[RMDB]
Record summary:
An RNA of 177 nucleotides, treated with DMS and 2A3 and read out base by base. Values cover nucleotides 27 to 126. For 2A3, 1,695 sequencing reads were counted. The reactions ran in a buffer of 150 mM KOAc, 10 mM MgCl2 and 150 mM bicine (pH 8.5), at 24 C. It was measured as part of the RMDB library M2PK90.
RNA sequence: GGGAACGACUCGAGUAGAGUCGAAAAAAAAUGAGUGCGUGGUAGCACAAACCAGACCAAUCUUCGGCACAUGGUCGCACAUGUACAGCUUCGCCUGUACAAAGCGAACAACAACAACAACAAGCAACUUUGCAUUUAGGUUCGCCUAAAUGCAAAGAAAAGAAACAACAACAACAAC
Reactivity to DMS in 0.01 (KOAc 150mM, MgCl2 10mM, bicine 150mM(pH8.5), 24C), signal-to-noise 2, nucleotides 027 to 126: a080a030a100a040u000g010a180g010u000g010c030g000u000g000g020u000a120g010c060a010c030a030a050a100c040c040a090g020a030c050c030a080a060u020c080u000u000c050g020g010c060a060c110a100u000g000g020u000c030g000c010a040c080a170u000g010u000a020c000a000g000c000u050u030c260g010c200c000u020g000u010a020c020a020a170a080g000c010g000a030a050c060a070a020c030a020a030c000a010a050c050a040a010c050a060a150g020c210a040a080
Reactivity to 2A3 in 0.01 (KOAc 150mM, MgCl2 10mM, bicine 150mM(pH8.5), 24C), signal-to-noise 1, nucleotides 027 to 126: a000a000a000a010u120g010a030g010u020g000c070g000u070g010g050u090a040g060c020a000c000a040a070a020c020c010a030g080a050c010c030a000a080u100c100u130u070c110g040g000c080a040c000a100u080g090g000u010c030g030c000a040c010a040u070g000u030a010c000a010g000c010u130u160c080g010c070c000u010g000u000a000c000a000a050a000g000c010g020a000a020c010a010a000c000a000a000c000a010a000c010a000a000c000a010a050g130c010a020a070